This 170-nucleotide RNA was probed chemically with 2A3 and DMS. Source: RMDB library 15KLIB, as collected in RNAgym. In probing experiments dimethyl sulfate is read out at A N1 and C N3, which are open when not base-paired. The RNA was probed in 150 mM KOAc, 10 mM MgCl2 and 150 mM bicine (pH 8.5) at 24 C. DMS adducts were read by reverse transcription with MarathonRT. The 2A3 profile rests on 8,101 reads.
RNA sequence: GGGAACGACUCGAGUAGAGUCGAAAAUGCCGAGGAGAGGCCGGAGACGGAGAGGCAGGAGGUCCCGAGGAGUAUCCAAGCAAAGAAGGGGAAGGAUCUCGAGGAAAACAUCUCCCAAGAAGAAGCGCACCUACGACGUUCGCGUCGUAGAAAAGAAACAACAACAACAAC
Reactivity to 2A3 in 0.01 (KOAc 150mM, MgCl2 10mM, bicine 150mM(pH8.5), 24C), signal-to-noise 3, nucleotides 027 to 129: u100g020c000c010g000a010g040g010a060g000a000g030g040c010c020g010g000a060g020a000c030g000g000a020g020a020g040g000c040a020g000g040a010g000g000u010c000c000c000g000a040g010g000a020g010u040a030u000c030c040a030a020g050c030a100a130a150g050a050a060g050g010g000g010a030a010g020g010a060u000c020u010c030g020a040g020g000a020a030a010a020c070a110u040c040u030c010c010c010a010a000g020a000a000g010a010a000g010c030g000c000a050c010
Reactivity to DMS in 0.01 (KOAc 150mM, MgCl2 10mM, bicine 150mM(pH8.5), 24C), signal-to-noise 3, nucleotides 027 to 129: u000g030c050c000g050a070g000g000a070g010a070g050g020c110c070g030g000a130g000a100c150g000g000a000g030a060g020g050c170a060g030g060a040g020g030u020c080c020c010g020a070g030g010a090g000u030a090u060c110c090a010a010g000c100a050a080a140g050a120a100g000g000g000g000a140a030g070g020a010u000c000u000c070g020a080g010g010a010a020a010a010c050a000u000c070u060c060c000c010a070a010g000a080a040g040a040a030g040c000g020c080a090c190